[RMDB]
RNA sequence: GGGAACGACUCGAGUAGAGUCGAAAAUGGAAAGGGACGCCUGGGAGGGUGAGAGCCCCGUCCGGCCCGGACCCUGCCGCACCACGAGGCGCCGUCAACGAGUCGGGUUGUUUGGGAAUGCAGCCCAAGUACACACGAGAUUCGUCUCGUGUGUACUAAAAGAAACAACAACAACAAC
Reactivity to DMS in 0.01 (KOAc 150mM, MgCl2 10mM, bicine 150mM(pH8.5), 24C), signal-to-noise 3, nucleotides 027 to 126: u000g000g020a040a070a070g020g010g000a210c050g000c230c010u010g010g020g000a200g020g000g040u000g010a110g000a170g010c000c000c020c100g000u010c040c040g000g000c020c050c010g000g000a080c050c030c010u000g000c040c040g000c070a120c060c030a040c070g010a090g000g010c020g000c030c020g000u020c050a100a110c010g000a060g010u000c030g010g000g000u010u000g000u010u000u010g020g030g020a070a050u030g000c090a060g000c000c000c000a030
Reactivity to 2A3 in 0.01 (KOAc 150mM, MgCl2 10mM, bicine 150mM(pH8.5), 24C), signal-to-noise 3, nucleotides 027 to 126: u160g030g060a060a080a090g040g010g030a060c020g050c020c030u060g030g020g020a070g010g030g000u040g030a080g010a010g060c000c000c000c000g100u050c010c000g030g010c010c010c010g000g060a080c000c000c000u040g020c010c010g030c010a040c020c010a060c070g050a050g030g000c030g000c010c010g060u080c010a050a060c030g030a030g040u070c020g010g030g000u000u020g010u010u020u060g080g010g020a120a060u130g000c010a000g020c000c000c000a000
An RNA of 177 nucleotides, treated with DMS and 2A3 and read out base by base. It was measured as part of the RMDB library RFM100. For DMS, 5,237 sequencing reads were counted. Conditions: 150 mM KOAc, 10 mM MgCl2 and 150 mM bicine (pH 8.5), 24 C. DMS adducts were read by reverse transcription with MarathonRT.